[RMDB]
Background:
Conditions: 150 mM KOAc, 10 mM MgCl2 and 150 mM bicine (pH 8.5), 24 C. The record gives the reactivity of an RNA of 177 nucleotides to DMS and 2A3. The 2A3 profile rests on 3,093 reads. Reactivities are given for positions 27 through 126. It was measured as part of the RMDB library OK2TST.
RNA sequence: GGGAACGACUCGAGUAGAGUCGAAAACUAAAAUCACAAGUUCAAGUAUGGAGAGCACUUUGAAUUGGGCAGGCAAUGUAAUCCAGACCACACGGUUGCUAGACCCCUCUUAAAAAACAGCCAUGUGACCAUGACUUUAUUUCGAUAAAGUCAUGGUAAAAGAAACAACAACAACAAC
Reactivity to DMS in 0.01 (KOAc 150mM, MgCl2 10mM, bicine 150mM(pH8.5), 24C), signal-to-noise 4, nucleotides 027 to 126: c050u010a050a050a100a100u020c100a090c120a110a090g010u010u000c050a050a100g000u010a060u010g000g010a110g010a090g020c080a020c080u010u010u000g020a010a060u010u000g000g000g020c030a050g010g010c060a060a070u000g020u000a080a090u000c040c040a080g000a100c160c020a040c060a040c080g010g000u000u000g010c100u000a070g000a110c040c010c020c030u000c110u000u010a000a040a040a040a030a030c030a010g000c020c020a050u000g010u000g000
Reactivity to 2A3 in 0.01 (KOAc 150mM, MgCl2 10mM, bicine 150mM(pH8.5), 24C), signal-to-noise 3, nucleotides 027 to 126: c010u030a050a000a020a140u140c060a040c040a190a050g010u050u060c030a060a030g040u030a070u090g030g000a020g010a010g030c000a010c050u100u090u090g020a070a040u060u050g070g010g000c020a040g060g000c050a020a050u060g020u100a060a020u030c050c020a050g050a090c010c030a010c010a000c050g010g020u010u020g000c020u010a040g090a110c000c000c020c010u070c120u080u120a090a070a010a000a020a010c010a000g010c030c000a050u090g030u020g050